[RMDB]
Record summary:
The record gives the reactivity of an RNA of 177 nucleotides to DMS. High DMS reactivity at an A or C suggests that its Watson-Crick edge is free. The reactions ran in a buffer of 150 mM KOAc, 10 mM MgCl2 and 150 mM bicine (pH 8.5), at 24 C. Reactivities are given for positions 27 through 126.
RNA sequence: GGGAACGACUCGAGUAGAGUCGAAAAUUGAGGCAUUACCCUACUUCUGUAUCUUACCUUGUGUAGUAGUAGCUCUGCCUCUAAGGUGGGAAAGAAAGUCCAAAGAAUGCCCCACAGGGCAUCCAGAGAAGACCUGCUAUUUCGAUAGCAGGUCUUCAAAAGAAACAACAACAACAAC
Reactivity to DMS in 0.01 (KOAc 150mM, MgCl2 10mM, bicine 150mM(pH8.5), 24C), signal-to-noise 2, nucleotides 027 to 126: u010u010g000a010g010g000c020a030u010u000a040c140c250c010u010a010c040u000u010c020u000g020u000a030u000c140u000u000a100c210c200u000u000g000u000g010u010a040g000u000a000g010u000a060g010c190u000c150u000g010c040c000u000c000u000a020a040g010g020u020g030g000g000a010a050a080g000a030a050a030g000u010c090c050a080a100a070g000a080a010u010g050c000c000c000c300a080c300a120g000g000g000c040a020u000c030c000a090g000a300